This 207-nucleotide RNA was probed chemically with 2A3 and DMS. For 2A3 the reverse transcriptase was SuperScript II with manganese. For 2A3, 2,264 sequencing reads were counted.
[RMDB]
RNA sequence: GGGAACGACUCGAGUAGAGUCGAAAAAGAUAUUACUUCUUUUACAGGGGCUAGCUCUACUGGUAACUUAGCUCUUUCAAUCUUAGCUCAGCUCCCUCUGAGUAGGAGCCAUGACAGGUUAAACUGUGGAAGAAUAUGAGCCUCACUUUAGGCUGUAGAUUUUAGGAUGAUUCGUCAUCCUAAAAUCAAAAGAAACAACAACAACAAC
Reactivity to 2A3 in 0.01 (KOAc 150mM, MgCl2 10mM, bicine 150mM(pH8.5), 24C), signal-to-noise 3, nucleotides 027 to 156: a000g060a020u110a050u150u120a170c020u000u010c000u000u100u020u060a050c050a040g020g000g030g020c020u040a020g030c010u020c040u150a100c080u120g110g010u060a070a050c020u030u080a010g010c010u020c000u050u110u080c100a090a110u010c050u090u130a040g030c000u010c010a000g010c020u060c000c000c010u030c010u010g010a000g000u010a040g020g020a020g010c050c060a060u100g080a060c020a050g000g030u050u130a090a180a070c010u020g010u020g030g010a020a000g000a040a010u100a090u160g060a010g010c010c000u020c020a050c030u040u040u090a010g010g000c020u010g130u070a010
Reactivity to DMS in 0.01 (KOAc 150mM, MgCl2 10mM, bicine 150mM(pH8.5), 24C), signal-to-noise 2, nucleotides 027 to 156: a050g000a140u010a090u020u000a150c070u000u010c010u000u000u000u000a100c050a130g040g010g040g050c030u020a050g020c040u000c030u010a190c100u000g060g010u000a050a050c020u000u000a050g000c010u000c070u000u000u010c040a070a120u010c100u000u010a110g040c020u010c050a050g000c010u010c020c020c010u010c070u000g000a100g040u020a080g010g000a070g060c020c080a060u000g000a080c090a060g000g030u010u000a050a060a160c020u020g030u000g020g000a040a070g000a050a130u010a120u020g010a080g010c010c020u000c030a100c090u020u000u010a030g040g010c020u000g020u000a140